RNA sequence: GGGAACGACUCGAGUAGAGUCGAAAAGCUCGACGGUGGCCGAGCCGAACAAAACAAGCGGGGCAGCAGUGCGACGAAGAUGACCAGCACGAUGAGCACGACCGGGGCCAUGUUCAGCAGGAAGUCGGACUGCAUCAUUAUUCGUAAUGAUGCAGUCAAAAGAAACAACAACAACAAC
Reactivity to 2A3 in 0.01 (KOAc 150mM, MgCl2 10mM, bicine 150mM(pH8.5), 24C), signal-to-noise 6, nucleotides 027 to 126: g030c000u020c040g020a030c040g050g070u080g040g020c010c020g010a000g000c010c000g050a070a030c050a060a090a010a010c040a080a030g050c010g030g000g040g020c020a010g020c010a020g030u020g080c020g020a050c030g030a080a030g090a120u130g050a060c020c030a000g010c020a010c030g060a070u090g020a010g020c010a010c050g060a040c010c040g030g000g020g000c030c000a020u070g030u050u100c020a040g000c010a000g020g110a060a020g050u080c080g040
Reactivity to DMS in 0.01 (KOAc 150mM, MgCl2 10mM, bicine 150mM(pH8.5), 24C), signal-to-noise 5, nucleotides 027 to 126: g010c040u020c010g010a100c080g030g000u020g020g020c060c010g000a070g010c000c020g010a120a080c110a050a080a110a070c160a090a130g000c060g000g000g000g020c050a050g020c070a050g020u010g010c030g020a060c100g010a080a080g030a050u030g000a110c070c050a100g010c040a090c110g010a110u020g000a110g020c050a050c080g010a080c030c050g000g000g010g010c060c060a110u000g000u000u010c060a090g000c030a070g000g000a060a070g020u020c110g010
An RNA of 177 nucleotides, treated with 2A3 and DMS and read out base by base. Values cover nucleotides 27 to 126. Source: RMDB library OK1LIB, as collected in RNAgym. The DMS profile rests on 10,301 reads. The 2A3 profile rests on 8,442 reads.